Background:
An RNA of 177 nucleotides, treated with DMS and 2A3 and read out base by base. 2A3 adducts were read by reverse transcription with SuperScript II with manganese. DMS adducts were read by reverse transcription with MarathonRT. Reactivities are given for positions 27 through 126.
[RMDB]
RNA sequence: GGGAACGACUCGAGUAGAGUCGAAAACAUCAGGAGGACCUUCCGCGCACUUCCAAGCAGGAGCUUUCCUUCCAAGCGCACUUCCAAUCUACUCGACAGGAGGAGGAGGAGGAGGAUUCCCACAAAAGAUGUCUUAAAAGUUCGCUUUUAAGACAUCAAAAGAAACAACAACAACAAC
Reactivity to DMS in 0.01 (KOAc 150mM, MgCl2 10mM, bicine 150mM(pH8.5), 24C), signal-to-noise 6, nucleotides 027 to 126: c070a090u010c140a120g000g000a060g010g000a080c300c030u010u000c010c060g010c080g020c070a120c090u000u020c080c100a070a140g030c040a080g000g010a060g000c080u010u000u000c010c000u010u010c020c050a060a110g010c110g000c090a080c050u000u010c020c010a090a130u000c010u000a080c020u000c010g000a110c160a130g000g000a050g000g000a060g000g010a110g000g010a110g000g010a080g000g000a210u000u000c000c000c000a090c270a060a100a100a100
Reactivity to 2A3 in 0.01 (KOAc 150mM, MgCl2 10mM, bicine 150mM(pH8.5), 24C), signal-to-noise 5, nucleotides 027 to 126: c030a060u130c070a040g000g030a010g000g030a040c000c010u070u000c060c020g050c030g010c050a060c100u190u060c070c030a060a020g020c020a030g010g040a010g010c040u080u100u080c010c000u080u030c020c010a080a020g060c040g030c060a030c040u030u000c010c000a030a100u000c010u030a030c010u030c050g130a130c110a140g110g070a030g020g020a040g020g030a010g010g030a040g030g000a010g000g000a030u030u000c010c010c000a050c010a010a060a010a020